[RMDB]
RNA sequence: GGGAACGACUCGAGUAGAGUCGAAAAUGUUAUUCUAGUGUUUUGGUUAUAAUCGAAUAACAAUAGUGAUUAGUCAUGAACGCUAUAUUAAAUACUCUUUCCAAAUCCGUCACCAGGAUAUGGUCCACCCCUAAAUUAAUUUCGAUUAAUUUAGGGGAAAAGAAACAACAACAACAAC
Reactivity to DMS in 0.01 (KOAc 150mM, MgCl2 10mM, bicine 150mM(pH8.5), 24C), signal-to-noise 5, nucleotides 027 to 126: u010g010u010u000a010u000u000c080u000a040g010u000g010u000u010u000u000g000g000u000u000a130u000a030a020u000c030g010a120a070u010a100a090c230a090a090u000a090g010u000g010a060u010u000a030g000u000c050a020u000g020a020a010c030g020c010u000a000u000a050u000u000a030a040a070u000a070c080u000c080u010u000u000c000c000a050a090a080u010c030c020g020u000c130a040c150c170a100g010g010a020u000a050u000g000g010u010c110c100a150
Reactivity to 2A3 in 0.01 (KOAc 150mM, MgCl2 10mM, bicine 150mM(pH8.5), 24C), signal-to-noise 4, nucleotides 027 to 126: u050g000u010u030a040u080u050c050u030a020g020u010g010u040u030u020u050g040g000u130u140a130u040a200a050u040c020g030a120a070u140a130a070c070a080a060u090a100g080u120g050a040u020u010a000g020u030c030a030u180g040a010a000c010g000c020u030a020u010a030u130u140a100a090a040u070a040c030u020c000u080u060u000c020c000a030a110a030u000c030c020g060u050c040a030c160c020a040g000g000a050u020a080u110g030g010u050c010c070a040
Chemical mapping of a 177-nucleotide RNA with DMS and 2A3.
2A3 adducts were read by reverse transcription with SuperScript II with manganese.
It was measured as part of the RMDB library OK2TST.
Reactivities are rounded to 0.1 and cut off at 0 and 3.